[RMDB]
RNA sequence: GGGAACGACUCGAGUAGAGUCGAAAAAACUUCAGCUGUCAGCAAUGAUGUAUAAUCCUUCUUGGAUACAAUGUAGCUGAGGAAGGAUGCACUAUAGAUCAACCCAAUUCACAAGGCUUGCCAUUACUCUUUUCAUCCUAUUCGUAGGAUGAAAAGAAAAAGAAACAACAACAACAAC
Reactivity to 2A3 in 0.01 (KOAc 150mM, MgCl2 10mM, bicine 150mM(pH8.5), 24C), signal-to-noise 6, nucleotides 027 to 126: a000a000c030u060u030c020a010g010c030u060g080u150c000a010g000c030a070a170u090g050a050u070g130u060a090u050a100a040u010c000c010u050u090c060u080u110g010g020a010u020a060c040a090a240u280g030u080a030g000c020u040g020a020g030g030a030a020g020g000a020u060g020c060a040c100u070a040u070a150g060a070u040c010a020a060c000c000c030a010a060u120u090c070a070c010a110a030g060g010c020u020u040g040c000c000a070u060u120a080c040
Reactivity to DMS in 0.01 (KOAc 150mM, MgCl2 10mM, bicine 150mM(pH8.5), 24C), signal-to-noise 6, nucleotides 027 to 126: a060a060c050u000u000c040a030g010c030u000g000u010c070a060g020c140a120a070u010g010a070u010g010u000a060u010a150a080u000c010c000u000u010c100u000u000g000g010a070u000a030c050a100a100u010g010u000a040g000c000u000g000a030g000g000a040a030g010g000a030u000g000c110a070c140u000a060u010a060g000a040u000c050a050a110c050c020c020a080a080u010u010c110a040c100a050a060g000g010c040u010u000g010c040c060a090u010u010a110c170
Source information: Structure probing data (2A3 and DMS) for a 177-nucleotide construct. The RNA was probed in 150 mM KOAc, 10 mM MgCl2 and 150 mM bicine (pH 8.5) at 24 C. For 2A3 the reverse transcriptase was SuperScript II with manganese. Reactivities are rounded to 0.1 and cut off at 0 and 3.